RNA sequence: GGGAACGACUCGAGUAGAGUCGAAAAACAUGCUGGCCAACCCAACCCCACGAUCCUCCAUCGGCAUGAUCAUGAUGUGUUCUCAAAUAUCAGGCCAGCAAAUCACCAUGCUCGUGCUGGUAAAGGCAACUUAUGCCCAAGUUCGCUUGGGCAUAAAGUAUAGGUGAAUGUUCGCAUUCACCUAUACAAAAGAAACAACAACAACAAC
Reactivity to DMS in 0.01 (KOAc 150mM, MgCl2 10mM, bicine 150mM(pH8.5), 24C), signal-to-noise 2, nucleotides 027 to 156: a080c080a090u000g000c030u010g020g000c010c030a140a170c080c040c030a100a170c020c010c010c030a070c130g030a150u000c000c000u000c030c060a060u010c020g040g000c010a040u010g020a040u000c020a070u000g010a030u020g010u010g000u010u010c040u000c040a100a060a130u000a100u010c080a090g000g020c000c010a030g040c010a000a020a070u020c030a030c010c000a030u000g010c090u010c010g050u000g010c000u000g010g030u000a010a040a050g010g000c080a050a100c090u000u000a020u000g000c000c000c020a010a040g010u000u020c300g010c000u000u000g020g000g000c020a000u000a000a010a120
Reactivity to 2A3 in 0.01 (KOAc 150mM, MgCl2 10mM, bicine 150mM(pH8.5), 24C), signal-to-noise 7, nucleotides 027 to 156: a010c060a030u040g000c000u010g000g010c000c010a040a050c070c030c060a070a080c030c020c030c020a060c080g060a120u070c010c020u040c050c000a030u030c010g000g010c010a000u000g010a020u020c010a010u020g050a070u110g020u010g030u110u020c040u020c030a070a100a020u270a120u140c100a050g010g010c000c000a000g010c000a010a040a040u070c000a000c010c000a010u010g000c000u010c010g010u010g000c010u010g000g000u050a100a100a020g050g000c030a040a040c060u020u010a010u010g010c000c010c000a010a000g010u030u070c120g030c130u000u010g060g000g000c000a000u000a000a000a000